[RMDB]
RNA sequence: GGGAACGACUCGAGUAGAGUCGAAAAGAUAUGGACGUAAAAGUUUUCUAUAGCCCCUUCAACAGCUCCAGUGUCGGAAACGACACGGAGACAUGAAGCGCUAUAGAAAACUUUUACGUCCUAAGUCGUUAAGGAUUUAGUUCGCUAAAUCCUUAACAAAAGAAACAACAACAACAAC
Reactivity to DMS in 0.01 (KOAc 150mM, MgCl2 10mM, bicine 150mM(pH8.5), 24C), signal-to-noise 5, nucleotides 027 to 126: g010a140u000a300u000g000g010a030c000g010u010a000a010a020a010g000u000u000u000u000c000u000a000u000a010g000c040c090c210c070u000u010c010a040a060c300a220g000c010u000c010c000a170g050u000g030u010c000g000g000a170a080a160c020g010a010c010a020c000g000g000a010g000a010c090a090u010g000a010a000g030c300g000c000u000a000u000a010g000a000a020a000a000c000u000u000u000u000a000c010g000u000c000c000u000a000a030g010u020c120